[RMDB]
RNA sequence: GGGAACGACUCGAGUAGAGUCGAAAAGGCGAUCGAGCGACAGGGCAUACAAGGUCCCUUGACGAAUGACCGAGACGCGAGUCUCCAGUAAGACUCACGGGAAGCCGAUGUUCUGUCGUACGUUUUGAAAAACGAGCCAGGGAGUGUGUCUGUAUGGGACUAUAGAGGCGUUCGCGCCUCUAUAGUCAAAAGAAACAACAACAACAAC
Reactivity to 2A3 in 0.01 (KOAc 150mM, MgCl2 10mM, bicine 150mM(pH8.5), 24C), signal-to-noise 1, nucleotides 027 to 156: g040g000c030g060a120u020c050g010a050g050c010g030a020c000a000g000g010g050c000a000u040a070c070a150a210g000g010u040c000c040c000u010u000g020a060c060g130a280a090u010g000a000c000c000g000a000g000a000c010g010c080g030a050g000u030c000u000c000c000a000g000u000a000a000g000a000c000u000c010a010c020g060g030g010a020a010g070c040c000g000a000u000g010u010u000c000u000g060u010c010g010u000a000c000g010u020u000u050u090g120a130a040a020a000a000c020g010a020g030c010c010a010g000g040g010a110g040u110g000u020g000u000c040u080g030u060a110u120g070g090
This 207-nucleotide RNA was probed chemically with 2A3. For 2A3 the reverse transcriptase was SuperScript II with manganese.